[RMDB]
RNA sequence: GGGAACGACUCGAGUAGAGUCGAAAAGCUAUUGUUGAAAUCACCGUACCUAUUUAGGUUUACGCUCCAAGAUCGGUGGAUAGCAGCCCUAUCAAUAUCUAGGAGAACUGUGCUAUGUUUAGAAGAUUAAAUCGACGCAUCUUCGGAUGCGUCGAAACCUAGUUAUAUAGUUCGCUAUAUAACUAGGAAAAGAAACAACAACAACAAC
Reactivity to 2A3 in 0.01 (KOAc 150mM, MgCl2 10mM, bicine 150mM(pH8.5), 24C), signal-to-noise 2, nucleotides 027 to 156: g030c000u010a010u000u130g190u150u220g140a100a120a040u150c000a030c010c000g000u020a030c000c050u100a190u240u200u300a010g000g000u000u000u070a000c020g020c010u000c000c000a000a010g030a030u030c020g060g010u000g030g010a000u000a000g010c030a020g000c020c000c000u050a100u220c070a060a080u050a000u130c000u020a000g020g000a010g030a030a060c050u080g020u040g170c070u110a050u170g080u020u050u080a090g030a220a060g000a110u130u160a120a120a100u000c010g000a000c000g000c010a000u010c000u030u000c080g090g000a000u000g000c000g000u000c010g010a000a000a000
Reactivity to DMS in 0.01 (KOAc 150mM, MgCl2 10mM, bicine 150mM(pH8.5), 24C), signal-to-noise 1, nucleotides 027 to 156: g040c010u000a030u010u000g020u040u010g020a080a150a220u000c010a060c020c010g000u000a050c000c040u000a230u000u000u000a020g040g030u000u010u000a050c030g030c010u010c030c000a070a070g000a030u010c070g050g090u000g020g020a050u010a030g030c000a210g000c070c020c020u000a200u000c080a060a110u000a160u000c050u000a150g000g000a110g000a080a100c060u020g030u000g000c030u000a120u020g010u000u010u010a100g020a090a170g000a230u000u000a020a140a120u000c000g020a040c000g000c000a010u000c010u000u020c300g050g000a040u010g000c000g000u010c000g000a000a000a090